[RMDB]
RNA sequence: GGGAACGACUCGAGUAGAGUCGAAAAGAUAUGGAUGGUGAGAGGCCGAUAAGCGUGAAGUCGGAAACGACUUACGCUUUUGACGGCUGGUACCAUCCUAAGUCAAACGGUAGGUUCGCCUACCGAAGACGCUUUGACUGUUCGCAGUCAAAGCGUCAAAAGAAACAACAACAACAAC
Reactivity to DMS in 0.01 (KOAc 150mM, MgCl2 10mM, bicine 150mM(pH8.5), 24C), signal-to-noise 1, nucleotides 027 to 126: g010a060u000a300u000g020g000a010u000g010g000u020g020a230g010a300g010g020c010c000g000a110u010a010a050g040c000g000u020g000a000a040g010u000c000g020g000a090a090a190c000g050a010c010u010u000a010c000g020c000u020u010u000u010g000a120c100g000g010c000u010g000g020u000a020c010c000a030u000c000c000u000a010a060g000u000c020a180a140a190c100g000g010u000a030g020g000u000u040c300g000c000c000u000a010c010c000g010a020a110